[RMDB]
RNA sequence: GGGAACGACUCGAGUAGAGUCGAAAAAAAAACGCAACGACUCGAGUAGAGUCGAAAAGGGAACGACUCGAGUAGAGUCGAAAAACAAACGACUCGAGUACAGUCGAAGCGAACCCAACCCAAAAAAGUGUAAGCAUAGAUUCGUCUAUGCUUACACAAAAGAAACAACAACAACAAC
Reactivity to DMS in 0.01 (KOAc 150mM, MgCl2 10mM, bicine 150mM(pH8.5), 24C), signal-to-noise 1, nucleotides 027 to 126: a000a020a030a020a000c090g020c100a020a080c000g000a000c000u000c020g000a080g000u000a030g000a000g020u000c000g000a000a000a020a050g010g010g010a070a060c000g000a000c010u000c000g010a070g000u000a030g000a010g000u000c000g000a000a010a020a230a110c110a070a100a150c040g000a010c020u000c020g020a110g020u000a170c300a020g000u000c000g020a030a300g000c030g000a070a070c000c000c010a110a120c000c010c000a000a090a030a080a090a090
Reactivity to 2A3 in 0.01 (KOAc 150mM, MgCl2 10mM, bicine 150mM(pH8.5), 24C), signal-to-noise 1, nucleotides 027 to 126: a080a140a040a110a110c300g000c300a000a000c000g010a000c010u010c010g000a000g010u000a000g000a000g000u000c000g010a000a000a000a000g010g010g000a010a000c000g000a000c000u000c010g020a020g060u080a010g020a000g000u000c000g000a000a000a000a000a060c100a070a070a000c010g010a010c010u000c000g010a020g070u080a050c090a020g020u000c000g000a020a000g000c010g010a010a010c010c000c000a010a020c010c000c000a050a070a020a020a020a040
Chemical mapping of a 177-nucleotide RNA with DMS and 2A3. For DMS, 3,128 sequencing reads were counted. The reactions ran in a buffer of 150 mM KOAc, 10 mM MgCl2 and 150 mM bicine (pH 8.5), at 24 C. The 2A3 profile rests on 11,536 reads. Source: RMDB library M2PK90, as collected in RNAgym.